An RNA of 177 nucleotides, treated with DMS and read out base by base. The DMS profile rests on 1,292 reads. Values cover nucleotides 27 to 126.

RNA sequence: GGGAACGACUCGAGUAGAGUCGAAAAUUGAGGACCGUGACAAGCUGAAAAGCUGGCACCUGCCUUCUACCUUCCACUUCGUGGCACCCAACAAGUAUACAUGCCGUUGCGAUACGGUGGUAAGCUGACUAGCCAUGAGGUUCGCCUCAUGGCUAGUAAAAGAAACAACAACAACAAC
Reactivity to DMS in 0.01 (KOAc 150mM, MgCl2 10mM, bicine 150mM(pH8.5), 24C), signal-to-noise 2, nucleotides 027 to 126: u010u000g020a050g000g000a050c050c300g000u020g010a050c070a100a040g020c010u000g020a110a070a120a080g020c000u000g000g040c030a060c020c120u010g030c000c020u000u000c030u000a120c040c020u010u010c010c040a080c070u000u000c040g060u000g020g020c170a080c050c010c020a090a090c210a040a060g030u000a150u010a030c050a080u000g010c020c000g000u000u000g020c210g000a110u000a040c020g000g000u000g000g000u000a020a300g000c060u000g020